[RMDB]
RNA sequence: GGGAACGACUCGAGUAGAGUCGAAAACGCAGCUCGACGUCCUCGGCGAUGUCGAUGAGCGGCAGCGGCGGGCUAUCGUUUUUCGACAGCCUGAAGCCUAGCGUGGGCAGCAAGCCUAGCAGCAGGGCGCUGACGCGAGCGGGGCUGAGCGGAGAAGUGAGUCUAAUUGUUUCGACAAUUAGACUCAAAAAGAAACAACAACAACAAC
Reactivity to 2A3 in 0.01 (KOAc 150mM, MgCl2 10mM, bicine 150mM(pH8.5), 24C), signal-to-noise 2, nucleotides 027 to 156: c020g040c040a030g040c000u010c010g100a090c060g100u160c010c020u100c080g120g000c090g120a130u110g020u090c060g040a080u100g060a020g000c040g000g000c020a010g000c000g150g020c040g000g010g000c010u020a010u030c000g040u000u000u000u300u250c010g000a000c010a000g000c000c000u020g070a180a010g060c000c000u030a040g030c030g020u130g000g030g000c060a080g060c140a170a070g000c010c000u070a090g120c050a030g000c010a000g050g020g000c000g000c030u020g010a030c000g020c010g050a040g050c010g000g010g000g010c040u080g010a020g050c010g020g040a080g000a140a020g100
Reactivity to DMS in 0.01 (KOAc 150mM, MgCl2 10mM, bicine 150mM(pH8.5), 24C), signal-to-noise 1, nucleotides 027 to 156: c030g010c000a180g010c070u000c020g010a020c020g000u000c030c040u010c190g030g030c040g040a020u000g030u000c000g040a070u000g020a260g000c020g010g000c030a070g030c000g030g010c040g030g000g010c010u020a000u020c010g030u000u000u000u000u000c030g000a110c010a010g000c020c000u000g000a090a190g010c000c030u000a190g030c020g000u000g030g000g020c000a220g060c230a140a090g020c000c030u000a120g020c020a190g050c070a300g000g050g020c010g000c000u000g020a040c010g000c010g000a070g030c030g000g000g070g020c010u000g000a060g020c050g030g000a110g020a130a200g000

Source: RMDB library OK3TST, as collected in RNAgym. An RNA of 207 nucleotides, treated with 2A3 and DMS and read out base by base. Reactivities are given for positions 27 through 156. The DMS profile rests on 2,508 reads.